Overview:
Conditions: 150 mM KOAc, 10 mM MgCl2 and 150 mM bicine (pH 8.5), 24 C. Structure probing data (2A3 and DMS) for a 177-nucleotide construct. In probing experiments dimethyl sulfate is read out at A N1 and C N3, which are open when not base-paired. Values cover nucleotides 27 to 126. The data come from the RNA Mapping Database (RMDB), library RFMREP.

RNA sequence: GGGAACGACUCGAGUAGAGUCGAAAAGGUAAGCGCCUCUGGCCCGAGGCCGCUCGUCGGGAAUCGGACACUGGAACUAGUACUCUGGUCAAUGCGGAUUGCCUGUGGCGGUGUUGGCUGGACGACCCCAACGUGAUAAGUUCGCUUAUCACGUUGGAAAAGAAACAACAACAACAAC
Reactivity to 2A3 in 0.01 (KOAc 150mM, MgCl2 10mM, bicine 150mM(pH8.5), 24C), signal-to-noise 2, nucleotides 027 to 126: g070g030u110a140a000g080c020g040c060c020u000c010u000g070g020c030c030c020g040a050g000g020c000c000g010c010u090c040g150u090c040g060g000g000a020a050u050c010g030g040a020c040a020c130u060g020g040a040a030c040u040a020g090u110a060c060u010c010u060g030g000u030c010a000a040u090g030c050g110g010a120u030u100g120c020c000u110g010u090g060g000c080g000g010u020g140u100u040g010g000c020u000g010g020a020c030g020a020c000c000
Reactivity to DMS in 0.01 (KOAc 150mM, MgCl2 10mM, bicine 150mM(pH8.5), 24C), signal-to-noise 2, nucleotides 027 to 126: g040g000u030a100a120g010c100g000c070c030u000c030u000g000g000c040c030c080g000a060g000g010c030c030g000c010u010c130g030u000c070g030g000g000a060a060u010c010g010g000a110c100a040c050u000g000g010a090a090c070u000a080g010u000a130c280u000c010u000g020g000u000c030a050a030u010g020c000g000g030a050u000u010g000c010c020u010g000u010g010g030c020g010g030u000g020u000u010g000g000c020u010g020g020a040c090g020a130c040c050